[RMDB]
RNA sequence: GGGAACGACUCGAGUAGAGUCGAAAACAGAACGUCGUGAGACAGUUCGGUCCCUAUCCUCCGCGGGCGCAGGAGAAUCGAGGGAGGCUGCCCCUAGUACGAGAGGACCGGGGUGGACGGACCUCCGACGUAAACAUUAGUUCGCUAAUGUUUACGUAAAAGAAACAACAACAACAAC
Reactivity to DMS in 0.01 (KOAc 150mM, MgCl2 10mM, bicine 150mM(pH8.5), 24C), signal-to-noise 9, nucleotides 027 to 126: c110a130g010a020a010c020g000u000c010g010u050g000a250g000a030c010a090g030u000u000c000g000g010u000c000c000c000u000a100u010c050c000u000c040c020g010c070g010g010g020c130g020c050a090g020g000a050g000a110a080u010c140g000a070g000g010g010a220g000g000c020u000g000c000c000c000c010u000a050g010u000a120c010g000a210g010a160g010g000a080c230c150g000g000g000g020u000g010g010a070c050g010g010a300c020c000u000c000c080g010
Reactivity to 2A3 in 0.01 (KOAc 150mM, MgCl2 10mM, bicine 150mM(pH8.5), 24C), signal-to-noise 9, nucleotides 027 to 126: c070a050g020a020a000c010g010u010c010g060u100g100a100g010a030c040a070g000u010u010c000g000g030u050c010c000c000u020a080u050c010c010u020c010c010g020c050g060g140g030c120g000c060a070g010g050a040g030a040a070u130c080g030a060g020g040g000a020g030g000c010u010g000c000c000c000c010u010a020g020u020a020c010g010a020g010a040g150g010a010c010c030g000g000g000g010u030g030g030a040c050g030g090a050c000c000u000c010c010g010